[RMDB]
RNA sequence: GGGAACGACUCGAGUAGAGUCGAAAAAUUGAUUUGAGACGUCGCCUUGCAGUGUUAACUUGGCUCUCAUGAACCUCUUUGAUCUUCCACAAAGGGUAGGCUAGGGGUGAAACCUCUUAGGCUAAAAUUCUUAUCCUCUUUUCGAAGAGGAUAAGAAAAAAGAAACAACAACAACAAC
Reactivity to 2A3 in 0.01 (KOAc 150mM, MgCl2 10mM, bicine 150mM(pH8.5), 24C), signal-to-noise 2, nucleotides 027 to 126: a000u070u130g020a030u020u030u140g030a030g010a030c060g050u090c000g040c000c000u010u030g010c070a060g040u100g040u300u140a060a030c010u030u030g000g000c000u000c010u010c030a020u080g040a050a050c000c000u060c000u060u030u000g030a060u000c050u110u000c030c000a030c020a100a040a030g020g050g000u000a020g060g000c000u020a000g010g000g020g010u040g070a180a080a030c000c000u000c020u000u050a050g040g030c030u040a060a020a050a060
Reactivity to DMS in 0.01 (KOAc 150mM, MgCl2 10mM, bicine 150mM(pH8.5), 24C), signal-to-noise 4, nucleotides 027 to 126: a100u000u010g010a110u000u010u000g010a080g010a080c190g030u000c080g010c030c000u000u000g020c060a080g010u010g020u010u000a050a080c060u000u000g010g010c040u000c020u000c060a070u000g000a100a090c120c010u010c000u000u000u000g010a050u010c070u000u010c030c040a100c070a030a040a050g000g000g010u000a030g000g010c010u000a030g010g010g000g010u000g000a090a060a300c090c000u000c030u000u000a030g010g000c010u000a020a040a070a100

This 177-nucleotide RNA was probed chemically with 2A3 and DMS. The RNA was probed in 150 mM KOAc, 10 mM MgCl2 and 150 mM bicine (pH 8.5) at 24 C.